Source: RMDB library RFM100, as collected in RNAgym. An RNA of 177 nucleotides, treated with 2A3 and read out base by base.

RNA sequence: GGGAACGACUCGAGUAGAGUCGAAAACCUCGGUGUCACUUACGGCAGGAGUCGAGGGGCUGCUGCUUUGAGCGCGGCCCCCGGCUGGGCGCUGCAUCCAUGUAUUGAGCACAUCGGGCGAAAGUCCUGGCUCACGGUGUUUCGACACCGUGAGCCAAAAAGAAACAACAACAACAAC
Reactivity to 2A3 in 0.01 (KOAc 150mM, MgCl2 10mM, bicine 150mM(pH8.5), 24C), signal-to-noise 1, nucleotides 027 to 126: c000c000u000c000g000g000u010g000u000c020a040c200u090u140a000c020g050g030c050a000g000g080a000g060u000c000g010a280g000g000g000g000c000u000g000c000u000g060c010u080u300u300g170a070g000c000g000c000g000g000c020c000c000c000c000g000g010c000u000g000g030g000c170g000c020u070g040c000a000u030c070c000a060u120g000u080a060u070u140g000a000g000c080a000c000a070u000c000g030g000g000c130g000a090a070a000g030u000c000c010

Source information:
The 2A3 profile rests on 451 reads. The reactions ran in a buffer of 150 mM KOAc, 10 mM MgCl2 and 150 mM bicine (pH 8.5), at 24 C. 2A3 adducts were read by reverse transcription with SuperScript II with manganese.